The record gives the reactivity of an RNA of 177 nucleotides to 2A3 and DMS. Reactivities are given for positions 27 through 126. 2A3 is a SHAPE reagent: it acylates the 2'-hydroxyl of flexible nucleotides of all four kinds. 2A3 adducts were read by reverse transcription with SuperScript II with manganese. The data come from the RNA Mapping Database (RMDB), library M2PK50.

RNA sequence: GGGAACGACUCGAGUAGAGUCGAAAACUUCUGGUGUUCGCACCAGAAGAAAUCCGUACUCGAGGCGCCACUCGAGAGAUAUUGUGGCUGUUCCCAGCCGGAAAACCGCUCCCUUCGGGGAGCGGAAGAAAGAUCAAUACUUCGGUAUUGAUCUUUCAAAAGAAACAACAACAACAAC
Reactivity to 2A3 in 0.01 (KOAc 150mM, MgCl2 10mM, bicine 150mM(pH8.5), 24C), signal-to-noise 2, nucleotides 027 to 126: c000u000u000c000u010g000g000u000g020u090u060c180g020c090a000c000c000a000g000a000a000g000a010a030a000u000c000c000g010u000a000c000u000c000g050a010g210g090c060g000c020c000a000c010u030c040g230a170g020a020g020a060u030a040u280u140g020u020g000g010c040u020g000u000u000c000c000c000a000g050c010c070g120g070a030a050a010a050c010c000g000c000u010c000c000c000u020u070c150g060g000g010g000a020g010c040g000g010a000a000
Reactivity to DMS in 0.01 (KOAc 150mM, MgCl2 10mM, bicine 150mM(pH8.5), 24C), signal-to-noise 1, nucleotides 027 to 126: c010u000u000c000u000g010g020u000g020u000u010c220g020c010a000c000c000a020g010a000a000g010a000a070a090u000c010c000g020u000a010c010u010c000g000a000g000g020c220g010c050c000a030c000u000c080g000a140g010a110g000a100u000a060u010u010g010u000g010g020c010u020g000u000u000c000c010c020a170g000c140c120g020g010a100a050a180a090c010c000g010c000u000c000c000c000u000u000c130g030g010g010g010a010g000c000g000g000a000a000